[RMDB]
RNA sequence: GGGAACGACUCGAGUAGAGUCGAAAACGGCCUGGCUUCGGCCAGGCCGAAAGAUGCAUUUUACGCCAAGAAAUCCCGGAACAUUCGCCCGGAAGCCUGAGAAAAGAGUACUGUUCGCAGUACUCAAGCUAUAAUACUCGUUCGCGAGUAUUAUAGCAAAAGAAACAACAACAACAAC
Reactivity to DMS in 0.01 (KOAc 150mM, MgCl2 10mM, bicine 150mM(pH8.5), 24C), signal-to-noise 2, nucleotides 027 to 126: c030g030g020c000c000u010g010g010c010u000u010c190g020g030c000c020a010g010g020c000c010g000a000a020a070g000a100u000g000c040a040u000u000u000u010a090c120g020c030c040a050a140g000a070a130a110u000c030c010c030g010g010a070a090c080a110u010u000c080g000c090c010c020g000g010a070a060g000c030c020u000g010a120g000a060a080a080a120g000a030g000u000a000c000u000g020u000u010c150g020c020a000g010u000a010c000u000c000a030a090
Reactivity to 2A3 in 0.01 (KOAc 150mM, MgCl2 10mM, bicine 150mM(pH8.5), 24C), signal-to-noise 2, nucleotides 027 to 126: c000g010g010c020c030u000g010g050c050u090u070c130g090g020c050c010a000g010g010c000c000g020a000a000a010g010a010u040g010c000a000u020u030u060u170a070c070g000c000c030a040a030g040a060a130a010u060c030c000c000g000g010a070a020c040a160u130u200c040g010c020c000c020g030g020a050a020g020c000c010u110g020a070g140a050a120a040a040g000a000g010u010a000c010u020g030u050u060c210g020c110a000g000u010a000c000u010c010a010a000
Chemical mapping of a 177-nucleotide RNA with DMS and 2A3. DMS adducts were read by reverse transcription with MarathonRT. The reactions ran in a buffer of 150 mM KOAc, 10 mM MgCl2 and 150 mM bicine (pH 8.5), at 24 C.